[RMDB]
RNA sequence: GGGAACGACUCGAGUAGAGUCGAAAACUGAACAUAUUCUUCUGGAGAGAGAAUAUGUUGAAGUAAUGAUGAAUCAUGAACCGCCUCAGGCUGGAAACAGAGCAGGGUUAGUGAUCGCUGACGUACGGUGUGAAGAUUACGGUUGAAUAAAAGGAUACACCUUAGUAAGCUUCGGCUUACUAAGGUGAAAAGAAACAACAACAACAAC
Reactivity to 2A3 in 0.01 (KOAc 150mM, MgCl2 10mM, bicine 150mM(pH8.5), 24C), signal-to-noise 2, nucleotides 027 to 156: c000u000g030a000a000c000a000u000a010u000u010c010u090u080c070u090g110g000a050g000a000g000a000g000a080a000u010a000u000g000u020u010g020a070a010g030u080a080a060u090g080a030u050g060a080a060u070c020a030u040g030a050a070c000c040g040c030c040u070c040a020g060g000c020u020g020g040a060a100a010c030a010g040a020g040c010a020g000g040g000u030u110a020g000u020g070a040u050c030g000c060u030g020a010c020g030u080a030c030g000g020u030g020u030g060a040a070g010a070u060u100a050c060g030g020u040u020g040a090a050u130a110a080a030a010g070g010a010u080a200
Reactivity to DMS in 0.01 (KOAc 150mM, MgCl2 10mM, bicine 150mM(pH8.5), 24C), signal-to-noise 2, nucleotides 027 to 156: c040u010g010a100a040c010a020u010a000u000u010c000u000u010c000u000g070g040a200g030a300g000a040g000a020a020u000a000u000g000u000u010g010a140a100g020u010a080a130u010g010a180u010g010a080a110u000c030a050u010g020a090a040c020c020g010c040c010u000c050a070g020g030c020u010g000g000a130a080a110c050a060g020a080g010c050a030g030g040g000u020u010a070g010u000g010a080u000c070g000c030u020g000a070c030g030u000a040c070g000g000u010g000u000g000a030a060g020a100u010u000a060c030g000g050u010u000g020a040a150u000a020a080a050a080g000g010a180u010a140